RNA sequence: GGGAACGACUCGAGUAGAGUCGAAAAUAUGGAUAAGAUCUACAUGGCUAUGGAGUUUGUUGAACAUGACAUGAAAAGUCUUUUAGACACAAUGUCUCGUCGAAACAAACGAUUUUCGAUAGGUGAAUACGCUGAUUUUAUUCGUAAAAUCAGCGUAAAAAGAAACAACAACAACAAC
Reactivity to DMS in 0.01 (KOAc 150mM, MgCl2 10mM, bicine 150mM(pH8.5), 24C), signal-to-noise 3, nucleotides 027 to 126: u000a050u010g010g010a070u020a030a040g000a300u010c030u020a040c080a080u000g000g000c080u000a070u010g020g000a170g020u000u000u010g010u010u000g000a130a030c010a060u000g010a020c010a020u000g010a140a110a100a160g010u000c010u000u020u010u010a050g030a010c000a060c170a090a070u000g020u000c000u000c140g020u010c070g000a160a050a010c040a000a010a010c010g000a060u000u000u000u000c020g000a060u000a050g000g010u020g010a050a130
Reactivity to 2A3 in 0.01 (KOAc 150mM, MgCl2 10mM, bicine 150mM(pH8.5), 24C), signal-to-noise 1, nucleotides 027 to 126: u080a010u010g060g000a010u030a080a210g000a050u000c010u070a030c040a060u060g120g000c010u020a050u110g110g000a050g030u000u050u030g010u030u040g040a050a000c010a070u070g010a000c010a000u010g030a140a130a040a000g000u020c000u000u210u010u080a040g010a000c020a010c050a130a040u000g010u020c010u030c090g110u060c040g000a050a040a000c010a000a030a000c010g050a030u050u000u020u050c020g080a000u060a030g160g060u000g110a040a080